[RMDB]
RNA sequence: GGGAACGACUCGAGUAGAGUCGAAAAGAAGGACGUGCCAAGCUGCGAUAAGCCUGAGGGAGCCGCACGGAGGCUAAGAACUCAGGAUCUCCUAAUGGGAAUCCCUAUAACAAUUGCCUUGCGCAAUCGACAUAUGUCUAUUCGUAGACAUAUGUCGAAAAGAAACAACAACAACAAC
Reactivity to 2A3 in 0.01 (KOAc 150mM, MgCl2 10mM, bicine 150mM(pH8.5), 24C), signal-to-noise 9, nucleotides 027 to 126: g130a020a020g010g000a000c010g010u000g020c010c010a010a010g000c000u010g000c000g130a160u000a010a000g000c010c000u000g000a000g000g000g020a010g000c000c000g030c010a020c200g020g000a030g000g000c000u070a180a000g000a000a000c000u000c010a000g000g000a000u000c000u000c000c000u050a090a080u110g040g010g120a040a090u060c010c000c000u070a100u050a130a090c110a060a050u050u040g010c010c020u150u290g030c100g000c070a010a030u020
Reactivity to DMS in 0.01 (KOAc 150mM, MgCl2 10mM, bicine 150mM(pH8.5), 24C), signal-to-noise 4, nucleotides 027 to 126: g010a250a080g010g020a000c010g020u010g010c010c010a090a080g000c000u010g000c010g020a030u000a010a030g000c000c000u020g000a000g000g000g000a000g020c000c010g010c010a090c300g000g030a160g000g030c010u000a190a080g010a110a200c010u000c010a010g000g010a010u000c050u000c000c020u000a050a140u050g010g010g010a080a120u000c000c000c010u010a090u010a080a090c250a070a110u040u000g010c020c020u030u030g010c120g000c020a020a010u000